Structure probing data (2A3) for a 207-nucleotide construct.
2A3 adducts were read by reverse transcription with SuperScript II with manganese.
Source: RMDB library M2RFOK, as collected in RNAgym.
RNA sequence: GGGAACGACUCGAGUAGAGUCGAAAAAUCAGAGGGCGCUAUCAUGCUAACUAGGAUUGUCUGCUCAUGCACAGAACCAACUACCGAUAACUAACAGUGCAUGAAGGUUAGUUAUUCCAUAUUAAUUAAAACUCGUAAUUCUUCGGAAUUACGAGAACACGAAAAUGUCCUUCGGGACAUUUUCGUGAAAAGAAACAACAACAACAAC
Reactivity to 2A3 in 0.01 (KOAc 150mM, MgCl2 10mM, bicine 150mM(pH8.5), 24C), signal-to-noise 1, nucleotides 027 to 156: a000u010c010a010g030a000g010g000g000c000g000c050u030a100u180c140a190u250g050c060u030a090a020c030u040a040g060g040a110u040u050g020u020c050u070g080c040u000c050a010u010g010c010a040c020a030g020a050a020c090c050a040a090c120u090a160c050c130g040a020u000a070a000c000u000a010a000c020a050g030u000g120c020a000u030g000a120a010g120g000u000u000a000g010u000u000a010u130u020c040c000a040u050a100u260u120a090a090u120u210a160a120a030a030c000u010c000g000u000a000a000u000u000c040u000u020c120g160g050a010a000u000u000a000c000g000a000g000a000a000